[RMDB]
RNA sequence: GGGAACGACUCGAGUAGAGUCGAAAAGGGGUCACACAACAGCGAUGUCGGAGCUAUGAAGUACACUGAAGCCUCCACGGUGUAUGGAGCUCCGCAUCGACAUGUGUGACGGAGGCACCCAAACAAGCCUAAUACGCUUCGGCGUAUUAGGCUUGAAGCUUCUUCAAUUGUUCGCAAUUGAAGAAGCAAAAGAAACAACAACAACAAC
Reactivity to 2A3 in 0.01 (KOAc 150mM, MgCl2 10mM, bicine 150mM(pH8.5), 24C), signal-to-noise 3, nucleotides 027 to 156: g020g010g130g020u030c010a010c010a000c000a060a300c100a080g050c030g030a020u090g230u300c060g010g000a010g000c010u040a300u300g000a000a000g010u000a000c000a000c010u020g030a090a020g020c010c000u000c000c000a010c000g020g000u000g000u000a010u020g020g000a000g000c000u000c000c020g000c020a000u030c000g000a030c000a060u210g010u000g000u000g000a000c000g000g000a010g000g010c010a020c010c000c000a030a040a000c010a000a000g010c000c000u010a000a000u010a000c000g000c020u050u130c250g120g000c000g000u010a000u000u000a000g000g000c000u000u000g000a000a000
Chemical mapping of a 207-nucleotide RNA with 2A3.
It was measured as part of the RMDB library RNAMAK.